[RMDB]
Structure probing data (2A3 and DMS) for a 177-nucleotide construct. For 2A3 the reverse transcriptase was SuperScript II with manganese. For DMS the reverse transcriptase was MarathonRT. The reactions ran in a buffer of 150 mM KOAc, 10 mM MgCl2 and 150 mM bicine (pH 8.5), at 24 C.
RNA sequence: GGGAACGACUCGAGUAGAGUCGAAAAUAUAUAUAGAUCGUUCUAUUAACGAACACGCGCGGGUCGUCGGUGGUCGGCGAGCCCACGGACGAACUUACUCGCGCGAACGAGUUAAAAUCGCCAGGAACUUAACCGAAAGAUUCGUCUUUCGGUUAAGAAAAGAAACAACAACAACAAC
Reactivity to 2A3 in 0.01 (KOAc 150mM, MgCl2 10mM, bicine 150mM(pH8.5), 24C), signal-to-noise 1, nucleotides 027 to 126: u110a000u000a010u000a020u070a040g070a130u080c010g020u020u020c050u040a140u200u090a070a040c040g000a030a000c050a020c060g020c000g000c000g000g020g050u020c000g020u010c030g120g020u010g000g000u050c060g000g040c030g000a010g000c000c020c020a010c020g060g010a020c020g000a020a010c000u070u070a030c020u050c000g000c010g000c010g000a000a000c020g000a000g000u060u050a020a040a020a070u010c030g040c030c000a030g090g100a070a090
Reactivity to DMS in 0.01 (KOAc 150mM, MgCl2 10mM, bicine 150mM(pH8.5), 24C), signal-to-noise 3, nucleotides 027 to 126: u010a100u000a110u000a140u000a100g010a110u010c030g000u000u010c020u010a130u020u010a090a060c040g000a120a070c150a070c010g020c000g020c000g000g000g000u000c000g000u000c010g010g050u000g000g020u000c050g010g000c030g010a050g020c300c000c000a000c000g000g000a020c010g000a140a080c160u010u000a120c020u000c000g030c000g010c020g000a010a000c090g010a120g000u000u000a030a010a050a080u000c020g000c020c000a210g000g000a080a120